[RMDB]
Source: RMDB library OK2TST, as collected in RNAgym. The record gives the reactivity of an RNA of 177 nucleotides to 2A3 and DMS. As a SHAPE reagent, 2A3 marks flexible, mostly unpaired nucleotides at the ribose 2'-OH. Reactivities are given for positions 27 through 126. The RNA was probed in 150 mM KOAc, 10 mM MgCl2 and 150 mM bicine (pH 8.5) at 24 C.
RNA sequence: GGGAACGACUCGAGUAGAGUCGAAAAACUCACAGCUUGGUCUCCACACAGAGCCCAGCCCAGGGGCGCUGGACGUGACCAUCAUGUACAAGGGCCGCACGGUGCUGCAGAAGGUGGUGGGACACCACGUCAGUACCCGGUUCGCCGGGUACUGACGAAAAGAAACAACAACAACAAC
Reactivity to 2A3 in 0.01 (KOAc 150mM, MgCl2 10mM, bicine 150mM(pH8.5), 24C), signal-to-noise 1, nucleotides 027 to 126: a000c040u060c020a010c020a070g030c040u060u060g040g020u040c010u040c020c000a080c000a000c000a070g010a040g070c000c030c000a030g020c030c010c050a040g040g000g000g010c010g060c030u000g010g000a020c040g020u020g000a040c040c000a060u110c000a000u070g060u110a090c070a120a090g040g050g000c000c000g050c090a060c110g050g060u060g070c070u040g000c040a030g050a130a040g090g000u050g010g030u030g000g090g020a050c020a010c060c020a030
Reactivity to DMS in 0.01 (KOAc 150mM, MgCl2 10mM, bicine 150mM(pH8.5), 24C), signal-to-noise 2, nucleotides 027 to 126: a070c060u000c050a120c090a090g000c080u010u010g030g020u000c020u010c050c080a130c140a300c030a020g000a050g020c000c040c010a060g020c000c030c030a210g000g010g040g010c070g030c000u010g010g050a060c220g000u020g000a070c090c000a070u000c060a030u000g030u020a080c130a140a090g010g020g030c030c060g010c160a090c140g000g020u010g020c070u000g010c130a110g020a120a100g020g000u000g010g010u000g010g010g010a120c090a060c040c050a070